RNA sequence: GGGAACGACUCGAGUAGAGUCGAAAACACUUAGGAACAUUGCUGACUAUGGAGUCCUAGGCUGACCAAAAGAAAUUUCUCAACUGCAGAACAGCUUCUUUUCCAAAAAUGUCCUUGUACAUUAAUAGAUGAGGAAAGUGAAUGAGGCUUAGAGAGAGAUACUCGGUACUUUCGAGUACCGAGUAUCAAAAGAAACAACAACAACAAC
Reactivity to 2A3 in 0.01 (KOAc 150mM, MgCl2 10mM, bicine 150mM(pH8.5), 24C), signal-to-noise 4, nucleotides 027 to 156: c050a000c000u030u040a020g000g040a040a050c010a080u070u180g030c100u140g070a170c060u120a120u230g070g040a100g080u020c010c010u010a010g010g030c060u030g050a080c040c000a040a040a070a060g110a020a120a050u040u170u000c010u010c010a080a170c080u110g030c120a030g030a200a070c010a020g020c000u020u000c000u000u110u030u020c020c000a020a080a020a040a150u060g020u030c010c010u050u070g080u190a040c020a030u100u190a160a100u110a210g140a070u120g020a030g020g000a040a040a020g080u100g070a050a060u040g010a000g010g000c010u060u100a030g030a000g000a000g000a000
Reactivity to DMS in 0.01 (KOAc 150mM, MgCl2 10mM, bicine 150mM(pH8.5), 24C), signal-to-noise 2, nucleotides 027 to 156: c100a060c020u010u000a120g000g010a070a120c100a080u000u010g040c060u020g040a250c210u000a160u000g020g030a100g040u000c010c020u000a090g020g000c000u020g000a270c070c000a060a030a050a160g020a060a080a120u000u000u000c000u010c020a050a010c040u020g000c030a110g000a070a300c050a130g000c040u010u000c020u000u000u040u000c000c050a050a090a090a110a080u000g030u000c040c060u030u000g000u010a100c060a060u000u000a040a210u010a030g040a070u000g010a150g020g000a020a080a060g020u000g020a100a100u010g020a080g020g040c040u030u010a050g010a080g000a090g020a190
Record summary: The record gives the reactivity of an RNA of 207 nucleotides to 2A3 and DMS. DMS adducts were read by reverse transcription with MarathonRT. The DMS profile rests on 2,216 reads. The reactions ran in a buffer of 150 mM KOAc, 10 mM MgCl2 and 150 mM bicine (pH 8.5), at 24 C. It was measured as part of the RMDB library OK3TST.